[RMDB]
RNA sequence: GGGAACGACUCGAGUAGAGUCGAAAAGAUUGAAGUGGGAGUUGAUGUGCCCAAUGCCAGCUUGAUGAUUAUCGAUAAUCCUGAACGGUUGGGGCUGGCGCAGUUACAUCAGUUACGUGGGCGUGUAAUGCAUGGUACCUUUCGAGGUACCAUGCAUAAAAGAAACAACAACAACAAC
Reactivity to DMS in 0.01 (KOAc 150mM, MgCl2 10mM, bicine 150mM(pH8.5), 24C), signal-to-noise 3, nucleotides 027 to 126: g010a120u010u000g010a020a110g040u010g000g010g010a160g050u020u000g020a040u000g010u000g000c030c030c050a100a120u000g000c010c010a010g020c020u010u010g000a100u000g010a090u000u000a110u020c060g000a130u000a060a080u000c030c090u000g040a080a110c130g020g010u000u000g010g000g000g010c030u010g000g000c040g020c200a060g000u000u000a040c030a060u000c020a060g020u000u010a060c170g030u010g000g010g000c050g000u020g000u000a090
Reactivity to 2A3 in 0.01 (KOAc 150mM, MgCl2 10mM, bicine 150mM(pH8.5), 24C), signal-to-noise 1, nucleotides 027 to 126: g100a010u140u190g020a050a030g120u030g010g110g050a030g030u050u030g000a040u000g010u090g000c000c000c080a000a020u110g020c000c000a000g000c010u030u060g030a060u080g020a010u060u070a000u130c060g070a070u060a140a000u090c010c030u030g050a200a000c080g030g000u010u010g040g010g030g000c010u000g000g000c010g020c040a000g000u060u110a000c010a030u070c040a030g000u220u190a030c120g040u010g000g000g040c120g000u040g040u050a040
Conditions: 150 mM KOAc, 10 mM MgCl2 and 150 mM bicine (pH 8.5), 24 C.
An RNA of 177 nucleotides, treated with DMS and 2A3 and read out base by base.
DMS adducts were read by reverse transcription with MarathonRT.
It was measured as part of the RMDB library OK2TST.